[RMDB]
RNA sequence: GGGAACGACUCGAGUAGAGUCGAAAAUUUACGAUCUUGAAUCUGGGUAAUCAGAUUCUGGAUGCUGAUCGCAGCAACGUGACUCUUGAGGAGCUCACUCAGCACAUGGCUGGCGGUGGCGAGCUAGGCGACAACCAAGAUUCGUCUUGGUUGUCGCAAAAGAAACAACAACAACAAC
Reactivity to 2A3 in 0.01 (KOAc 150mM, MgCl2 10mM, bicine 150mM(pH8.5), 24C), signal-to-noise 1, nucleotides 027 to 126: u150u120u050a040c130g020a030u030c020u000u030g020a030a020u000c000u000g090g090g030u230a130a140u230c000a000g000a030u000u010c010u020g000g040a040u080g000c070u050g030a040u030c080g000c040a030g050c010a020a060c050g020u030g100a060c020u010c040u130u300g060a080g100g070a040g070c080u070c010a060c000u040c020a030g050c010a010c040a090u130g140g020c030u020g070g000c040g010g050u020g000g000c000g030a040g020c000u030a060g000
Reactivity to DMS in 0.01 (KOAc 150mM, MgCl2 10mM, bicine 150mM(pH8.5), 24C), signal-to-noise 1, nucleotides 027 to 126: u010u010u010a160c160g040a110u000c000u000u000g000a010a010u000c000u000g000g000g020u020a040a060u010c000a030g000a010u000u010c000u010g010g000a030u000g010c040u000g000a050u000c040g020c050a050g000c040a160a040c220g000u010g000a090c050u000c040u000u000g020a130g040g000a100g000c260u010c110a080c030u020c020a110g040c040a080c140a070u020g000g010c000u040g000g020c040g040g010u000g020g030c020g000a040g030c060u000a030g000

The record gives the reactivity of an RNA of 177 nucleotides to 2A3 and DMS. The data come from the RNA Mapping Database (RMDB), library OK2TST. The 2A3 profile rests on 827 reads. The DMS profile rests on 935 reads. DMS (dimethyl sulfate) methylates the pairing face of unpaired adenines and cytosines. For 2A3 the reverse transcriptase was SuperScript II with manganese.